Structure probing data (DMS and 2A3) for a 177-nucleotide construct.

[RMDB]
RNA sequence: GGGAACGACUCGAGUAGAGUCGAAAAGAUAUGGAGCGUCGGGAGUCCUGUGUCGGAAACGACAUCUAAGGACGACGAUCGACGAACUACUCCUAAGUCAAAAGUACGAUGGUUCGCCAUCGUACAACGUGGAAAGUGAGUUCGCUCACUUUCCACGAAAAGAAACAACAACAACAAC
Reactivity to DMS in 0.01 (KOAc 150mM, MgCl2 10mM, bicine 150mM(pH8.5), 24C), signal-to-noise 3, nucleotides 027 to 126: g000a010u000a030u010g010g000a010g010c010g000u010c000g000g000g000a000g040u000c000c020u030g000u000g010u000c000g010g000a000a010a040c000g000a000c000a000u020c300u000a200a060g020g000a000c000g010a080c300g010a020u000c010g000a010c000g000a090a180c180u010a250c010u010c000c000u000a010a120g000u010c020a040a080a120a130g040u000a000c030g020a020u000g000g000u000u010c210g030c010c000a000u010c000g000u000a000c000a010a070
Reactivity to 2A3 in 0.01 (KOAc 150mM, MgCl2 10mM, bicine 150mM(pH8.5), 24C), signal-to-noise 1, nucleotides 027 to 126: g010a000u010a000u070g010g000a010g020c000g000u010c020g020g000g000a000g000u020c010c000u000g010u010g000u020c000g020g000a000a000a000c000g030a010c010a030u040c120u230a110a120g010g000a020c010g070a110c010g000a010u000c000g010a000c000g030a120a120c070u150a100c010u040c000c010u000a010a000g020u020c030a070a000a000a160g000u000a000c020g000a010u010g040g100u050u070c300g040c090c000a010u000c000g000u000a000c000a000a000